[RMDB]
RNA sequence: GGGAACGACUCGAGUAGAGUCGAAAAGCUCGGUGACACCGCGUCUGCCUGGGUCCGAAAGAUUUCUUGUCGCAAAUCUACAAGACAUUGGUUAACGUGUGGGCCGCUUGAGCGGCCGCUCGGCGGGAGUUGGGUUGGUGUUCGCGCCGAUCCAACUAAAAGAAACAACAACAACAAC
Reactivity to 2A3 in 0.01 (KOAc 150mM, MgCl2 10mM, bicine 150mM(pH8.5), 24C), signal-to-noise 7, nucleotides 027 to 126: g030c000u010c020g020g020u040g030a020c010a010c030c010g010c010g030u010c040u040g010c010c000u030g040g000g010u000c010c000g040a080a050a010g010a010u020u020u000c020u040u110g080u070c050g010c080a020a010a060u030c010u020a020c010a050a000g010a010c010a020u020u070g030g010u050u110a040a000c010g010u020g010u080g030g040g010c000c000g000c010u090u140g020a020g010c000g000g010c010c010g000c010u020c020g030g000c010g010g030g010
Reactivity to DMS in 0.01 (KOAc 150mM, MgCl2 10mM, bicine 150mM(pH8.5), 24C), signal-to-noise 7, nucleotides 027 to 126: g020c020u010c020g000g010u010g010a110c100a100c020c030g010c030g000u020c050u020g000c010c010u000g010g010g000u000c010c030g000a100a120a060g000a040u000u000u000c030u020u030g010u010c160g010c180a030a040a050u020c020u010a040c140a120a070g010a020c030a070u010u000g000g000u020u010a060a110c040g000u010g000u010g010g010g010c020c000g020c000u010u030g010a060g010c000g010g010c030c020g000c000u000c020g010g010c030g000g010g000